[RMDB]
RNA sequence: GGGAACGACUCGAGUAGAGUCGAAAAUCGAGCCGGGUCUUGCAUCGGGUUGGCUCAUCCUGAGACCGGGGAGCUUCGACGAUCUCUUGUCUCUCCUGAAGGAGGAAGGAGCUCUCGAACGCUCUCCCUUAAAGAAAGGGUUCGCCCUUUCUUUAAGAAAAGAAACAACAACAACAAC
Reactivity to DMS in 0.01 (KOAc 150mM, MgCl2 10mM, bicine 150mM(pH8.5), 24C), signal-to-noise 5, nucleotides 027 to 126: u010c150g000a030g010c010c010g010g000g010u000c020u000u010g010c190a090u010c110g000g000g010u010u010g010g010c010u000c020a110u000c010c010u000g000a120g010a110c210c110g010g000g000g000a020g000c020u000u000c010g000a030c220g010a030u000c000u000c000u000u000g010u000c040u010c010u000c000c000u010g030a150a180g010g010a010g000g010a140a020g000g000a020g000c100u000c010u000c010g000a010a020c130g020c010u000c000u000c000c000
Reactivity to 2A3 in 0.01 (KOAc 150mM, MgCl2 10mM, bicine 150mM(pH8.5), 24C), signal-to-noise 4, nucleotides 027 to 126: u110c030g000a010g010c000c010g050g050g150u030c040u080u180g080c040a070u080c050g140g100g060u030u030g020g000c000u010c010a020u040c010c000u040g090a050g040a060c040c060g000g000g000g010a000g000c010u010u010c010g000a020c100g010a010u000c010u000c000u030u060g250u090c050u030c000u030c110c020u160g180a260a150g010g010a010g010g000a000a000g010g000a000g000c000u000c000u010c000g000a010a010c070g000c010u000c000u000c000c010